RNA sequence: GGGAACGACUCGAGUAGAGUCGAAAAAGAUAGAUGAAGUUAAACUGGUAACUGGGAAUCUUAGAAACACCAGGAGCACUAAAUUUAGCACUGAAGGUCAUGUCCCAGGCUCAUGAAAUGCCGCUACCCUUUUACAUGACUUCGGUCAUGUAAAAGGAAAAGAAACAACAACAACAAC
Reactivity to DMS in 0.01 (KOAc 150mM, MgCl2 10mM, bicine 150mM(pH8.5), 24C), signal-to-noise 2, nucleotides 027 to 126: a060g020a130u000a100g000a100u000g000a170a060g020u000u000a000a050a080c040u000g010g010u000a030a170c010u000g000g010g010a070a030u010c070u000u000a100g020a120a130a120c100a100c050c010a020g000g000a120g010c120a090c040u000a040a060a090u010u010u000a070g000c020a050c060u000g010a150a110g000g010u000c020a040u000g000u000c000c000c000a070g010g000c040u010c160a100u010g010a040a070a060u000g010c020c050g000c120u010a100c150
Reactivity to 2A3 in 0.01 (KOAc 150mM, MgCl2 10mM, bicine 150mM(pH8.5), 24C), signal-to-noise 2, nucleotides 027 to 126: a010g000a030u130a000g040a040u060g060a120a050g040u040u050a050a110a020c040u020g000g030u020a050a020c040u000g010g000g050a060a070u030c040u120u160a080g090a090a100a020c090a020c020c030a030g000g020a020g000c010a010c080u080a020a070a180u090u120u100a000g000c000a000c060u030g070a070a010g070g040u000c030a040u050g010u000c030c000c000a020g020g000c010u020c040a050u110g140a060a060a040u070g030c000c030g050c010u070a130c010
Conditions: 150 mM KOAc, 10 mM MgCl2 and 150 mM bicine (pH 8.5), 24 C. Chemical mapping of a 177-nucleotide RNA with DMS and 2A3. It was measured as part of the RMDB library OK2TST.